[RMDB]
Chemical mapping of a 177-nucleotide RNA with DMS. DMS adducts were read by reverse transcription with MarathonRT. Source: RMDB library TTRINS, as collected in RNAgym. The RNA was probed in 150 mM KOAc, 10 mM MgCl2 and 150 mM bicine (pH 8.5) at 24 C.
RNA sequence: GGGAACGACUCGAGUAGAGUCGAAAAGAUAUGGAUUAGCCGAGCGUGGAUUUACGUUGAAAAGGCGGAAAUCGGAAACGAUUUCCGCCUUGGAGUAAGCCACGCGUUUGACGCUAAUCCUAAGUCAUCCUUCUGAAGAGUUCGCUCUUCAGAAGGAAAAAGAAACAACAACAACAAC
Reactivity to DMS in 0.01 (KOAc 150mM, MgCl2 10mM, bicine 150mM(pH8.5), 24C), signal-to-noise 2, nucleotides 027 to 126: g000a030u020a300u000g010g010a020u000u010a000g060c000c010g000a150g020c000g050u000g000g000a080u000u000u000a020c000g050u000u010g000a150a110a010a000g010g030c000g000g010a000a020a030u000c000g000g000a130a170a240c020g010a020u010u000u010c000c000g000c000c000u000u000g000g000a050g000u000a000a040g000c000c000a020c000g000c000g010u000u020u000g000a170c300g000c010u010a020a020u000c000c000u000a000a070g000u010c060a130